[RMDB]
RNA sequence: GGGAACGACUCGAGUAGAGUCGAAAAAGAACAGGUCCGAGUCAAAUAGCAAUGAUUCGAAGCACUUCUUUUUACACUAUUUCGGAAACCCAAGGACUCAAUCGUAUGGAUAUGUAAAAUACAGGAUUUCCAAUCCUAGCAGGAAAGGGAGGGAAACGUCUUACAAAGGCUUCGGCCUUUGUAAGACAAAAGAAACAACAACAACAAC
Reactivity to 2A3 in 0.01 (KOAc 150mM, MgCl2 10mM, bicine 150mM(pH8.5), 24C), signal-to-noise 1, nucleotides 027 to 156: a000g080a010a030c090a050g030g030u000c060c030g030a000g000u030c030a000a100a170u110a100g060c090a120a030u050g000a000u000u030c040g030a050a000g090c010a020c040u050u070c000u000u040u000u020u170a010c030a010c000u070a090u040u210u180c050g050g000a060a080a170c040c000c000a000a020g060g020a000c020u020c150a030a110u050c040g010u050a090u210g060g030a010u040a120u180g070u130a090a080a000a000u070a030c080a020g020g030a060u010u000u130c030c010a000a000u040c030c010u060a080g000c090a050g020g070a110a020a040g040g020g020a020g030g030g000a070a000a000c060
The data come from the RNA Mapping Database (RMDB), library ARCHII. An RNA of 207 nucleotides, treated with 2A3 and read out base by base. The 2A3 profile rests on 558 reads. The reactions ran in a buffer of 150 mM KOAc, 10 mM MgCl2 and 150 mM bicine (pH 8.5), at 24 C.